Notes
This 207-nucleotide RNA was probed chemically with 2A3.
RNA sequence: GGGAACGACUCGAGUAGAGUCGAAAAGUGAACGAUCUCGGUUGUUUCUCUGAAGGCAUGAUCACCCCGUCCGAUGCGGAAGUCCGUGCUUCCGUCGAACGCGAAAGUCGGACGGCGGCCAUGAGUCAAUAUGUUUAAGGCUUCGGCCUUAAACAAACCUGAGCAUAAUCUUCGGAUUAUGCUCAGGAAAAGAAACAACAACAACAAC
Reactivity to 2A3 in 0.01 (KOAc 150mM, MgCl2 10mM, bicine 150mM(pH8.5), 24C), signal-to-noise 1, nucleotides 027 to 156: g130u130g050a150a050c040g050a050u010c030u020c100g000g020u000u000g000u010u000u000c010u000c000u030g040a040a040g070g000c030a020u010g000a060u100c010a020c000c000c050c010g000u030c000c010g000a000u070g000c000g000g030a000a020g030u170c140c110g140u220g060c000u000u010c010c000g000u030c000g000a120a100c070g000c030g180a150a060a000g020u010c000g000g000a000c000g030g000c000g000g000c000c020a030u030g010a000g050u010c010a040a080u080a040u250g000u000u000u000a000a000g010g000c000u000u080c240g100g020c000c000u010u010a000a000a000c000a000a000a040
The RNA was probed in 150 mM KOAc, 10 mM MgCl2 and 150 mM bicine (pH 8.5) at 24 C.